[RMDB]
RNA sequence: GGGAACGACUCGAGUAGAGUCGAAAAGCCACUGUGAACGGUGCCGCCCGACAGGACACGCUCAGCCCCUGACACGCUCGGCUCUGCGCGCCUGAGACCAGCACCGAGAGGAGACAGCGGUGAGCGCUUCCCAAACCGGAUUCGUCCGGUUUGGGAAAAAAGAAACAACAACAACAAC
Reactivity to DMS in 0.01 (KOAc 150mM, MgCl2 10mM, bicine 150mM(pH8.5), 24C), signal-to-noise 2, nucleotides 027 to 126: g000c060c060a100c040u000g000u000g010a180a070c040g010g000u000g000c000c000g090c030c010c010g010a150c120a030g000g030a130c130a210c070g040c010u000c160a010g030c020c000c010c030u000g060a070c130a100c210g060c100u020c040g030g080c100u000c100u010g000c000g000c000g050c010c020u020g000a190g000a090c050c000a040g090c030a050c020c000g030a140g000a010g000g000a230g020a040c050a130g000c220g040g030u010g040a140g000c000g010c070
Reactivity to 2A3 in 0.01 (KOAc 150mM, MgCl2 10mM, bicine 150mM(pH8.5), 24C), signal-to-noise 1, nucleotides 027 to 126: g030c030c000a020c050u150g000u060g090a180a040c040g000g010u050g040c030c020g060c040c010c000g020a040c030a030g020g020a020c010a010c100g010c000u010c020a060g140c000c000c000c010u060g020a050c040a000c070g060c050u010c020g000g040c010u000c010u030g110c050g010c000g010c010c000u050g030a050g030a020c040c070a000g000c000a000c000c020g040a030g000a040g000g040a070g010a020c020a000g000c000g010g010u050g000a000g020c000g010c050